[RMDB]
RNA sequence: GGGAACGACUCGAGUAGAGUCGAAAACUGUAUGCCUGUGCCGCGCAAUUGCCGCCGGACGAGCUGGCCCGCGAGCGCGGCGCCUACUUCGGCUCGCUGCUGGGCACGCUCAACCACGUGGCGGUGACCCGGAUUAUUACUUCGGUAAUAAUCCGGGAAAAGAAACAACAACAACAAC
Reactivity to DMS in 0.01 (KOAc 150mM, MgCl2 10mM, bicine 150mM(pH8.5), 24C), signal-to-noise 1, nucleotides 027 to 126: c030u000g010u000a080u020g000c070c000u000g040u000g000c040c020g000c050g000c110a120a120u000u000g000c000c030g000c030c030g000g010a050c300g000a020g000c000u000g000g000c000c020c020g000c080g000a050g000c050g040c050g040g000c140g020c050c060u010a080c130u000u000c220g010g010c000u010c040g030c000u010g020c030u000g000g000g050c010a010c060g000c000u010c010a070a300c060c060a120c170g050u000g000g010c000g020g000u000g000a110
Reactivity to 2A3 in 0.01 (KOAc 150mM, MgCl2 10mM, bicine 150mM(pH8.5), 24C), signal-to-noise 1, nucleotides 027 to 126: c020u040g020u170a040u080g070c050c030u100g060u130g050c080c030g030c020g020c090a020a200u090u100g010c030c010g000c020c000g020g040a000c020g020a010g000c000u030g030g000c000c030c000g060c100g180a030g000c090g000c020g040g030c030g030c000c000u130a110c070u060u120c030g060g000c020u000c000g000c000u120g000c000u070g020g000g010c020a020c020g040c010u020c010a030a010c020c030a050c220g050u140g000g000c000g040g010u060g000a010

The record gives the reactivity of an RNA of 177 nucleotides to DMS and 2A3. DMS adducts were read by reverse transcription with MarathonRT. The reactions ran in a buffer of 150 mM KOAc, 10 mM MgCl2 and 150 mM bicine (pH 8.5), at 24 C. 2A3 adducts were read by reverse transcription with SuperScript II with manganese. Reactivities are given for positions 27 through 126. The DMS profile rests on 943 reads.